[RMDB]
RNA sequence: GGGAACGACUCGAGUAGAGUCGAAAAUGCGACAUCGUAUGUCUGAUGUGUUUCAUGAUCACUUAAAAUCGGCGUCAAUACUUCACCUACUGUACCAGCAACACCAUAACAAUAUCCGAAUAAUUCAUCUUGAGGAAGAUUUCGAUCUUCCUCAAGAAAAAGAAACAACAACAACAAC
Reactivity to DMS in 0.01 (KOAc 150mM, MgCl2 10mM, bicine 150mM(pH8.5), 24C), signal-to-noise 4, nucleotides 027 to 126: u000g020c120g000a080c020a040u010c100g000u010a240u000g030u010c060u000g010a070u010g010u000g000u000u000u000c060a090u020g000a100u010c040a050c050u000u000a040a050a120a090u010c060g010g020c090g000u000c050a060a080u000a050c090u020u000c070a090c030c030u000a100c050u000g010u020a060c040c030a040g000c050a050a080c060a040c030c040a050u000a030a070c080a070a120u000a060u010c040c030g010a080a080u010a060a110u020u010c100a090
Chemical mapping of a 177-nucleotide RNA with DMS. DMS adducts were read by reverse transcription with MarathonRT. It was measured as part of the RMDB library OK2TST.